[RMDB]
Source: RMDB library OK3TST, as collected in RNAgym. The record gives the reactivity of an RNA of 207 nucleotides to DMS and 2A3. Conditions: 150 mM KOAc, 10 mM MgCl2 and 150 mM bicine (pH 8.5), 24 C. For DMS the reverse transcriptase was MarathonRT. The DMS profile rests on 6,424 reads.
RNA sequence: GGGAACGACUCGAGUAGAGUCGAAAAGAUGAGGCCUCUGAGCUUCCUAUCCAGCAGUGGUGAAGGCCUUGCCCUGGGUGGCAAGAUACUUGCUCUAUGGUCACAGCUCAGCCACGGGAAGCUGUGCGACCUCAGGUGAGCAAUUCACUGUCCAGUAUAGUGGACUAAAUUUCGAUUUAGUCCACUAAAAAGAAACAACAACAACAAC
Reactivity to DMS in 0.01 (KOAc 150mM, MgCl2 10mM, bicine 150mM(pH8.5), 24C), signal-to-noise 3, nucleotides 027 to 156: g020a120u020g000a050g010g010c020c010u010c100u000g040a100g010c020u000u000c010c030u000a150u010c050c060a150g010c060a140g020u010g000g040u000g010a120a050g000g020c030c010u000u000g000c030c020c030u000g010g020g030u000g030g000c000a030a020g010a160u010a020c030u000u000g040c000u010c040u010a090u010g010g030u010c010a040c040a080g020c040u000c040a250g030c010c040a070c080g000g030g000a090a030g000c000u010g010u010g000c030g000a020c000c000u000c110a090g010g020u000g010a070g030c060a040a120u000u000c070a030c020u010g020u000c000c050a130g010u010a200
Reactivity to 2A3 in 0.01 (KOAc 150mM, MgCl2 10mM, bicine 150mM(pH8.5), 24C), signal-to-noise 5, nucleotides 027 to 156: g050a060u110g010a010g010g000c030c040u110c160u170g130a070g020c010u050u030c010c020u120a140u120c060c050a030g030c030a030g060u010g030g030u050g060a100a030g060g010c010c000u010u010g000c020c000c000u190g160g000g070u240g040g000c020a010a000g020a040u130a120c100u040u030g000c000u000c000u070a090u180g000g010u020c030a010c030a050g000c010u040c080a030g010c020c040a100c050g060g000g020a020a010g000c000u000g000u020g030c050g040a110c020c000u040c050a040g050g090u060g020a030g000c060a070a040u080u020c020a020c020u000g040u030c010c010a020g000u070a100